[RMDB]
RNA sequence: GGGAACGACUCGAGUAGAGUCGAAAACGACAGUAUGGUUAACGGCGAGCAAUCGCAGAUUGUGAGCUUAAGAGCGCAACUUACUGAAGCAAAAUAUAACCUUGAGCAGACUGUCAUUCGCGCACCAGAAGAUUGAGUAGUUCGCUACUCAAUCUUCAAAAGAAACAACAACAACAAC
Reactivity to DMS in 0.01 (KOAc 150mM, MgCl2 10mM, bicine 150mM(pH8.5), 24C), signal-to-noise 4, nucleotides 027 to 126: c080g030a120c000a030g000u000a050u000g010g010u010u020a080a120c180g030g020c010g000a200g000c160a060a050u000c020g030c130a070g030a120u000u000g010u000g000a280g020c050u000u000a070a060g000a130g000c020g020c060a070a100c070u000u000a010c070u000g010a110a240g000c060a040a040a080a110u010a090u000a090a040c040c010u000u020g010a120g010c100a080g000a070c000u000g000u000c030a160u010u010c110g020c060g020c060a150c030c060a150
Reactivity to 2A3 in 0.01 (KOAc 150mM, MgCl2 10mM, bicine 150mM(pH8.5), 24C), signal-to-noise 4, nucleotides 027 to 126: c050g030a010c000a010g040u080a100u190g080g040u040u070a100a020c060g030g000c010g010a030g000c020a020a020u010c100g040c300a040g010a030u020u010g020u010g030a030g020c000u060u070a060a010g050a020g070c030g000c040a030a060c050u090u140a070c040u080g080a060a020g040c050a020a040a160a020u200a080u020a050a030c020c000u040u100g070a030g060c040a020g040a090c010u010g000u010c010a030u070u100c070g030c010g000c040a050c030c010a060

The record gives the reactivity of an RNA of 177 nucleotides to DMS and 2A3. Conditions: 150 mM KOAc, 10 mM MgCl2 and 150 mM bicine (pH 8.5), 24 C. DMS adducts were read by reverse transcription with MarathonRT.